[RMDB]
RNA sequence: GGGAACGACUCGAGUAGAGUCGAAAAAUGGUGACCUUCGGGUCACCAUGGUGCGUAGCUGCGAUAAUUUAAUAGCUACGCUUAAUAAAUUUAAUUAACGCAAUGGAGCCUGCUUCGGCAGGCUCAAUUAAGAUCCUAGUUUCGACUAGGAUCUUAAAAAAGAAACAACAACAACAAC
Reactivity to DMS in 0.01 (KOAc 150mM, MgCl2 10mM, bicine 150mM(pH8.5), 24C), signal-to-noise 2, nucleotides 027 to 126: a000u000g010g000u010g000a000c000c000u000u020c210g020g030g030u000c000a000c000c010a000u000g020g020u000g030c000g010u000a020g000c010u020g010c210g020a130u000a110a090u000u000u020a160a090u000a040g020c000u000a010c010g010c010u000u010a020a040u000a050a060a080u010u000u000a090a080u010u020a070a130c090g000c120a090a080u000g000g010a020g000c000c000u000g020c010u000u010c200g030g000c010a010g010g000c010u000c000a000a020